[RMDB]
RNA sequence: GGGAACGACUCGAGUAGAGUCGAAAAGAUAUGGACAGAGCAGUCAGCGAGGGAAUCGGAAACGAUUCCUCCCCACCGCUGGGAGCUGCGACGAAGUCCUAAGUCAAAACCAUCGUUCGCGAUGGAACCUCCAGUAGGUGUUCGCACCUACUGGAGGAAAAGAAACAACAACAACAAC
Reactivity to 2A3 in 0.01 (KOAc 150mM, MgCl2 10mM, bicine 150mM(pH8.5), 24C), signal-to-noise 1, nucleotides 027 to 126: g030a050u100a090u090g000g020a000c020a020g170a000g090c000a010g110u300c000a000g020c000g040a090g000g000g000a010a000u010c010g020g000a050a010a030c020g000a000u000u000c000c020u050c000c000c000c020a050c050c000g020c020u010g080g050g090a150g110c040u020g070c030g070a300c030g070a220a060g000u000c020c000u040a090a000g060u020c030a030a030a140a170c000c010a000u000c010g160u070u090c300g000c040g150a000u020g010g060a030a060
Reactivity to DMS in 0.01 (KOAc 150mM, MgCl2 10mM, bicine 150mM(pH8.5), 24C), signal-to-noise 1, nucleotides 027 to 126: g000a050u000a160u000g010g060a020c000a080g000a170g010c010a000g000u010c030a010g000c000g060a200g020g030g000a010a020u000c010g020g020a020a030a240c010g000a040u000u000c000c000u020c060c000c000c040a300c100c020g000c000u030g000g000g070a150g000c000u000g020c000g010a090c220g040a070a060g000u000c000c010u000a080a140g000u020c050a070a090a090a070c010c010a000u000c000g000u000u000c300g030c100g000a080u000g050g000a060a050
Structure probing data (2A3 and DMS) for a 177-nucleotide construct. The 2A3 profile rests on 1,228 reads.